RNA sequence: GGGAACGACUCGAGUAGAGUCGAAAACGGCCUCCACCGUGUUGAUCUGCCCACAAGGCGGCUUGACGAGAUUGCGACUGGAACGAAGUUGUCCUGAGGGACGGGGAAGCGUUUACGUAUCAGCCAGGAAACUUCUCACAUUCGUGUGAGAAGUUUCAAAAGAAACAACAACAACAAC
Reactivity to DMS in 0.01 (KOAc 150mM, MgCl2 10mM, bicine 150mM(pH8.5), 24C), signal-to-noise 3, nucleotides 027 to 126: c090g000g010c010c010u000c030c030a160c040c050g000u000g020u000u010g000a020u010c020u010g010c040c010c030a080c270a200a300g010g000c040g000g000c060u000u010g000a150c070g000a080g000a060u000u000g010c040g010a090c020u020g010g000a110a070c030g000a090a100g020u030u010g000u030c020c020u010g020a140g020g000g020a070c110g000g000g000g010a070a080g020c030g000u000u000u000a090c080g010u000a080u010c050a120g000c040c030a120g010
Reactivity to 2A3 in 0.01 (KOAc 150mM, MgCl2 10mM, bicine 150mM(pH8.5), 24C), signal-to-noise 4, nucleotides 027 to 126: c020g070g000c000c010u000c000c010a100c020c020g040u020g060u090u030g050a080u010c010u070g030c000c000c010a100c040a020a020g020g000c030g020g010c050u010u050g040a040c050g010a010g060a150u020u170g060c020g040a060c060u070g030g040a050a070c060g020a070a080g040u120u140g040u050c000c000u030g030a130g070g020g010a030c030g010g030g040g000a010a010g040c010g010u020u050u080a050c040g010u020a050u170c030a010g030c010c000a010g070